[RMDB]
RNA sequence: GGGAACGACUCGAGUAGAGUCGAAAAGUUCAAUACUCAUUGAGCAACUACUAUGUGCUUGGCACUGUUUUAGAUGCUGGGGAUACAGCAGUGAACCAAUAAGACUAAACCUCUUGUCUUCACAGAGCAUACCGAUCUGAUUCGUCAGAUCGGUAUGAAAAGAAACAACAACAACAAC
Reactivity to DMS in 0.01 (KOAc 150mM, MgCl2 10mM, bicine 150mM(pH8.5), 24C), signal-to-noise 8, nucleotides 027 to 126: g000u000u010c020a070a090u000a130c130u000c120a160u000u000g010a020g010c040a120a190c050u000a060c070u000a050u000g020u000g000c030u010u010g010g000c020a020c020u000g010u000u000u000u010a040g020a100u000g010c010u000g000g010g000g010a110u000a040c070a030g010c030a030g010u000g000a070a100c080c090a040a050u000a060a090g010a040c020u000a040a110a130c190c080u000c030u000u000g000u000c050u000u000c070a050c100a120g000a090g000
Reactivity to 2A3 in 0.01 (KOAc 150mM, MgCl2 10mM, bicine 150mM(pH8.5), 24C), signal-to-noise 6, nucleotides 027 to 126: g020u020u000c020a040a010u080a210c060u080c190a070u020u100g030a000g010c010a050a020c010u090a020c010u040a070u150g040u030g120c030u030u060g040g000c000a010c030u020g130u070u220u050u160a090g040a110u050g020c040u040g000g020g000g030a030u060a110c020a020g030c000a010g040u020g050a030a010c020c000a030a070u080a110a000g010a020c030u070a050a050a100c020c010u020c030u020u020g020u010c000u020u030c060a080c030a080g050a030g070